RNA sequence: GGGAACGACUCGAGUAGAGUCGAAAAGAUGAUACCGAUGCACUCAUGCUUUAAUCAGGAUCAGGGGUUCUAAUUAAUGAUGCUCUACAGAUCUCAGAUUGUCUUGAGAGUAUCGUAACUCAGUUGUCGACUGAAUGUUUGGAGAUCAUGGAGCUAAAGAAUGUAAGACUUUCGAGUCUUACAUUCUAAAAGAAACAACAACAACAAC
Reactivity to 2A3 in 0.01 (KOAc 150mM, MgCl2 10mM, bicine 150mM(pH8.5), 24C), signal-to-noise 6, nucleotides 027 to 156: g070a050u110g000a020u060a100c030c030g020a020u050g010c060a050c050u050c010a050u100g040c040u090u100u210a060a060u080c030a020g030g010a010u020c020a020g010g000g000g020u040u040c050u120a150a160u210u130a080a080u230g080a020u100g030c000u010c010u030a090c080a040g010a010u030c030u010c050a040g020a170u060u100g020u090c030u060u080g000a060g000a000g010u020a010u080c020g020u020a030a020c010u000c030a040g000u060u040g130u140c050g040a030c010u030g050a080a100u090g080u050u110u120g070g010a030g000a020u030c030a050u060g040g030a010g000c000u020a060a050
Reactivity to DMS in 0.01 (KOAc 150mM, MgCl2 10mM, bicine 150mM(pH8.5), 24C), signal-to-noise 4, nucleotides 027 to 156: g010a080u010g010a130u000a090c060c010g000a100u000g020c040a090c050u010c040a100u000g010c030u010u000u000a060a070u010c050a050g030g010a060u000c030a160g020g020g040g010u010u000c060u000a040a080u000u010a080a100u000g000a090u010g020c020u000c010u000a220c090a080g000a060u010c060u010c030a190g020a140u000u000g010u000c040u000u010g000a100g020a120g020u000a060u000c060g010u000a050a080c030u000c010a170g010u000u010g000u000c060g010a150c040u000g010a050a030u010g020u010u000u020g010g010a070g010a050u000c020a110u000g010g010a070g010c030u000a050a120
The data come from the RNA Mapping Database (RMDB), library OK3TST. Chemical mapping of a 207-nucleotide RNA with 2A3 and DMS. For 2A3, 4,100 sequencing reads were counted. The reactions ran in a buffer of 150 mM KOAc, 10 mM MgCl2 and 150 mM bicine (pH 8.5), at 24 C. 2A3 adducts were read by reverse transcription with SuperScript II with manganese. Reactivities are given for positions 27 through 156.